[RMDB]
RNA sequence: GGGAACGACUCGAGUAGAGUCGAAAACCUACUUAUACUAAAAUGUAAGCCUGUAUUUAAGCAGUAUAAGCAAUACUUAAAUAUAUUACUGCCCUUAGAUCAAAGCUAUAUGCAUUAGUACCUCUAUUUGUACCUUAUGCUUCGGCAUAAGGUACAAAAAAGAAACAACAACAACAAC
Reactivity to 2A3 in 0.01 (KOAc 150mM, MgCl2 10mM, bicine 150mM(pH8.5), 24C), signal-to-noise 2, nucleotides 027 to 126: c000c010u000a060c010u080u140a000u000a050c020u030a090a090a020a020u100g030u020a040a080g000c000c020u110g060u110a070u010u040u010a010a010g040c010a000g020u000a080u020a060a020g030c060a130a050u040a090c020u050u180a130a220a020u150a030u050a030u110u020a030c000u010g010c000c090c000u000u000a000g000a000u020c020a020a020a020g000c000u000a000u000a010u290g020c000a070u010u000a020g040u040a080c000c040u040c030u140a070u040
An RNA of 177 nucleotides, treated with 2A3 and read out base by base. Values cover nucleotides 27 to 126. It was measured as part of the RMDB library RFM100. Conditions: 150 mM KOAc, 10 mM MgCl2 and 150 mM bicine (pH 8.5), 24 C. For 2A3 the reverse transcriptase was SuperScript II with manganese.